[RMDB]
RNA sequence: GGGAACGACUCGAGUAGAGUCGAAAAGCGCGUAGGUUCAGAUGAUGGGCCCGCAUCUGUACGAAAGCCAGACGAAAGUCCAGCCUACGUGCAUGAGCACGCGGGCCCCGUGCUCUACUGCAAAAGACCGUAGUAUGGUAUUCGUACCAUACUACGGAAAAGAAACAACAACAACAAC
Reactivity to 2A3 in 0.01 (KOAc 150mM, MgCl2 10mM, bicine 150mM(pH8.5), 24C), signal-to-noise 9, nucleotides 027 to 126: g040c020g000c010g010u000a000g010g030u080u140c070a010g010a100u060g000a020u070g040g000g000c000c000c000g000c000a010u000c010u020g090u100a070c080g130a130a080a010g080c050c020a030g010a010c010g080a160a030a000g000u010c010c000a000g000c000c000u000a010c000g000u000g000c000a010u070g010a000g010c030a010c040g000c030g000g010g000c010c000c000c000g000u010g000c000u000c010u040a110c070u100g100c060a060a050a050a040g070a050
Reactivity to DMS in 0.01 (KOAc 150mM, MgCl2 10mM, bicine 150mM(pH8.5), 24C), signal-to-noise 4, nucleotides 027 to 126: g010c030g030c000g010u010a000g010g010u010u000c060a030g030a030u010g000a050u060g000g010g020c000c000c000g010c000a020u000c000u000g020u060a110c080g000a100a110a180g000c150c140a130g000a030c000g000a110a080a180g000u000c010c140a100g000c000c000u000a080c000g000u000g010c030a000u050g020a080g020c010a030c040g010c080g020g000g000c020c000c020c000g000u000g000c000u010c040u000a090c080u010g000c130a070a070a090a070g000a170
Chemical mapping of a 177-nucleotide RNA with 2A3 and DMS. For 2A3 the reverse transcriptase was SuperScript II with manganese. It was measured as part of the RMDB library OK1LIB. Conditions: 150 mM KOAc, 10 mM MgCl2 and 150 mM bicine (pH 8.5), 24 C.